[RMDB]
RNA sequence: GGGAACGACUCGAGUAGAGUCGAAAAAGAAACCCGUGAAUUUCGCGCCGGACCACGGCCAGCACGUUGUCCUCGUGCGACACCUGGGCCGCCAGCUCGUCGCACACCCCCAGGUGCGCCGUGGUUUCGGUGAUGACGGAACGCAGGCUCGCGAGGGAUUAGUCAUCCUUUUCGAAGGAUGACUAAUAAAAGAAACAACAACAACAAC
Reactivity to 2A3 in 0.01 (KOAc 150mM, MgCl2 10mM, bicine 150mM(pH8.5), 24C), signal-to-noise 2, nucleotides 027 to 156: a000g070a010a070a020c000c000c020g030u080g050a150a280u040u090u110c050g000c000g000c020c010g010g000a000c000c010a000c010g000g030c000c010a050g010c000a010c030g080u080u190g150u170c070c030u140c040g000u000g000c000g030a020c010a020c000c030u010g050g020g050c060c080g140c050c010a040g010c020u160c150g130u060c000g000c010a010c020a040c010c000c010c020c020a000g040g050u010g020c000g000c010c000g020u010g000g000u010u020u050c010g030g000u000g020a030u010g020a030c030g020g020a070a010c040g000c080a050g110g000c120u110c060g030c010g010a090g020g040g000
Reactivity to DMS in 0.01 (KOAc 150mM, MgCl2 10mM, bicine 150mM(pH8.5), 24C), signal-to-noise 1, nucleotides 027 to 156: a200g000a090a120a090c010c000c030g000u010g000a070a120u010u010u000c000g000c020g010c010c030g050g010a040c020c010a040c090g000g040c010c070a140g020c010a010c000g020u000u010g000u000c050c060u020c040g010u000g030c030g020a090c020a030c090c010u030g000g000g060c160c150g000c010c030a150g010c030u000c090g050u000c040g010c030a040c040a070c030c000c020c020c030a020g020g050u000g020c060g030c010c000g060u000g010g010u000u010u000c000g050g020u010g000a030u000g000a130c020g030g030a060a050c020g040c000a130g000g000c010u000c030g010c020g020a130g020g030g000